[RMDB]
RNA sequence: GGGAACGACUCGAGUAGAGUCGAAAACGGUCGAAAUUCGUUUCGACCGAAUAUGCUAGCUGAGCACAGCUGCAAUGCUAAGCUGAAAGCCAGGUGCAAGCGCGAGUUCGGCGUUCGCGCCGAACAAUCAACAACAUAUAUUCGUAUAUGUUGUUGAAAAAGAAACAACAACAACAAC
Reactivity to 2A3 in 0.01 (KOAc 150mM, MgCl2 10mM, bicine 150mM(pH8.5), 24C), signal-to-noise 9, nucleotides 027 to 126: c010g000g000u000c000g010a010a010a020u150u100c200g070u030u010u010c000g000a000c000c000g000a000a020u110a040u060g020c030u050a110g030c010u030g030a020g040c020a020c020a180g030c040u050g000c050a090a040u140g010c030u070a060a060g000c010u010g060a150a030a010g020c010c020a040g000g070u060g050c050a070a040g030c060g010c030g070a080g080u000u020c010g000g010c010g030u030u040c180g000c000g000c030c000g010a000a000c000a000a060
Reactivity to DMS in 0.01 (KOAc 150mM, MgCl2 10mM, bicine 150mM(pH8.5), 24C), signal-to-noise 9, nucleotides 027 to 126: c020g010g010u000c000g010a010a010a020u000u010c190g020u000u000u000c000g010a010c000c000g010a030a020u000a080u000g010c030u000a070g010c010u000g010a270g020c030a100c060a070g010c070u000g000c080a080a110u000g010c050u010a080a060g010c010u000g000a080a110a080g010c010c050a070g010g010u000g010c060a080a070g010c070g000c140g010a130g010u000u000c010g010g000c000g020u000u010c180g010c010g020c000c000g000a010a010c020a100a110